An RNA of 177 nucleotides, treated with 2A3 and DMS and read out base by base. For 2A3, 1,060 sequencing reads were counted. The RNA was probed in 150 mM KOAc, 10 mM MgCl2 and 150 mM bicine (pH 8.5) at 24 C.
[RMDB]
RNA sequence: GGGAACGACUCGAGUAGAGUCGAAAAGUAACUUAUGUAAGGUCACACUGCUAGUAACUGGUAGGACAUACUCAACUCCAGAUAGGUGACUCAUGGAAAUUUCUGCUGUGUCUUACAUCUUCACCUAGCACUGAAGCUGAUUCGUCAGCUUCAGUGCAAAAGAAACAACAACAACAAC
Reactivity to 2A3 in 0.01 (KOAc 150mM, MgCl2 10mM, bicine 150mM(pH8.5), 24C), signal-to-noise 2, nucleotides 027 to 126: g080u070a090a060c040u040u170a020u160g020u030a040a050g030g010u170c010a040c000a000c050u090g000c060u070a030g040u060a180a030c050u050g040g040u090a040g020g030a000c020a110u150a090c020u030c100a060a030c030u000c000c000a000g030a300u100a050g130g000u020g030a060c030u030c070a050u010g030g180a050a150a060u140u210u050c050u030g060c000u020g010u030g000u000c010u000u020a000c020a130u000c060u060u050c020a090c050c030u040a010
Reactivity to DMS in 0.01 (KOAc 150mM, MgCl2 10mM, bicine 150mM(pH8.5), 24C), signal-to-noise 1, nucleotides 027 to 126: g020u020a090a090c060u010u020a030u010g020u030a070a040g030g000u020c130a040c040a050c120u040g000c050u030a060g030u000a050a080c040u000g000g000u030a010g000g030a060c100a040u000a050c080u010c080a010a110c200u000c000c030a030g000a090u020a050g020g000u010g010a100c110u010c230a160u040g000g000a020a050a170u000u040u010c030u020g030c160u000g000u000g010u000c010u000u000a030c010a090u010c160u000u000c080a090c090c030u000a100